This 177-nucleotide RNA was probed chemically with DMS and 2A3.
RNA sequence: GGGAACGACUCGAGUAGAGUCGAAAAAGCCAGUUACGACUGGCACCUCAGACAUCUCGGGGAUCAUCAUGUCACGAGAUACCACUGUGCACUUGUGACAGAUUGAUAACUGAAAGGUCUGGGAGAAAUUUAGGACCAAAUUCGUUUGGUCCUAAAUAAAAGAAACAACAACAACAAC
Reactivity to DMS in 0.01 (KOAc 150mM, MgCl2 10mM, bicine 150mM(pH8.5), 24C), signal-to-noise 6, nucleotides 027 to 126: a080g020c000c000a010g010u010u010a100c170g030a080c000u000g000g000c000a100c070c000u010c000a000g000a020c010a050u010c080u000c000g000g000g000g000a030u000c000a020u000c060a130u010g010u000c000a000c000g010a000g010a140u030a100c020c050a180c210u010g020u040g040c140a100c010u000u000g020u000g010a010c000a010g010a040u010u030g000a010u010a020a030c000u000g000a010a030a060g000g020u000c000u000g000g000g010a120g000a080a100
Reactivity to 2A3 in 0.01 (KOAc 150mM, MgCl2 10mM, bicine 150mM(pH8.5), 24C), signal-to-noise 9, nucleotides 027 to 126: a010g000c000c000a010g010u020u080a080c210g020a020c120u000g000g000c000a020c000c000u010c000a000g000a000c000a050u080c040u010c060g020g000g000g010a010u000c000a000u000c060a110u020g000u000c000a000c000g010a010g010a050u120a080c010c040a170c220u260g110u220g080c050a010c050u010u000g000u000g000a000c000a010g000a010u080u190g000a000u020a020a010c000u000g020a050a030a010g060g000u000c000u000g000g020g000a170g100a020a130
The data come from the RNA Mapping Database (RMDB), libraries RFM100 and RFMREP. For DMS the reverse transcriptase was MarathonRT.